Overview:
An RNA of 177 nucleotides, treated with DMS and 2A3 and read out base by base. It was measured as part of the RMDB library OK2TRN.
[RMDB]
RNA sequence: GGGAACGACUCGAGUAGAGUCGAAAAACGUGCGAAAGCACGUUGGUUGUCGUAGGAUAUGUAGGAUAUUCCUACAUGAGGAUCACCCAUGUUCGCAUGGAAGAAGGACAGAAGGACGAUGACCAUAUAAAAUAGCUCCUUUCGAGGAGCUAUUUUAAAAAGAAACAACAACAACAAC
Reactivity to DMS in 0.01 (KOAc 150mM, MgCl2 10mM, bicine 150mM(pH8.5), 24C), signal-to-noise 5, nucleotides 027 to 126: a030c000g040u010g010c000g010a150a080a190g010c000a000c010g010u000u000g010g020u000u000g010u000c010g020u000a060g000g010a140u010a020u000g010u000a020g000g010a180u010a190u000u000c000c000u000a010c000a000u000g000a140g000g000a100u000c030a150c110c000c010a020u000g020u010u020c170g030c010a000u000g000g010a100a050g030a130a140g010g000a070c080a120g000a090a180g010g000a020c010g000a010u000g000a020c010c000a100u000a120
Reactivity to 2A3 in 0.01 (KOAc 150mM, MgCl2 10mM, bicine 150mM(pH8.5), 24C), signal-to-noise 2, nucleotides 027 to 126: a000c000g020u010g010c000g100a200a000a000g000c000a000c000g000u010u010g000g010u000u000g000u000c010g010u000a020g030g060a090u040a000u190g010u000a010g040g020a060u030a180u300u200c010c000u000a020c010a010u020g030a050g080g050a070u030c020a060c020c010c010a000u000g040u040u050c230g020c090a010u040g000g040a050a100g070a080a040g120g020a040c040a010g090a070a030g080g020a000c000g010a000u010g010a010c000c050a000u040a010